About this RNA:
Chemical mapping of a 177-nucleotide RNA with 2A3. Source: RMDB library M2PK50, as collected in RNAgym.

RNA sequence: GGGAACGACUCGAGUAGAGUCGAAAACAGACCAAGUUCGCUUGGUCUGAAAGAAAGCGGAAAGCACCAGGGAGGGAAGGUGCGGGCCGCAAGCACCCAUAAAAAGUACGAUCUUCGGAUCGUACAACCUGUGCGACCUGUUCGCAGGUCGCACAGGAAAAGAAACAACAACAACAAC
Reactivity to 2A3 in 0.01 (KOAc 150mM, MgCl2 10mM, bicine 150mM(pH8.5), 24C), signal-to-noise 1, nucleotides 027 to 126: c000a000g010a010c010c000a000a000g000u000u090c060g020c190u000u000g010g020u000c000u000g020a000a010a000g060a000a060a020g000c000g000g020a050a000a000g000c010a000c010c000a080g050g040g070a170g000g060g000a040a140g030g020u030g000c030g010g000g000c000c020g000c010a010a010g020c000a080c000c070c020a010u270a070a120a040a000a000g000u010a000c020g010a010u040c000u020u090c210g040g010a000u000c000g000u000a010c000a010a010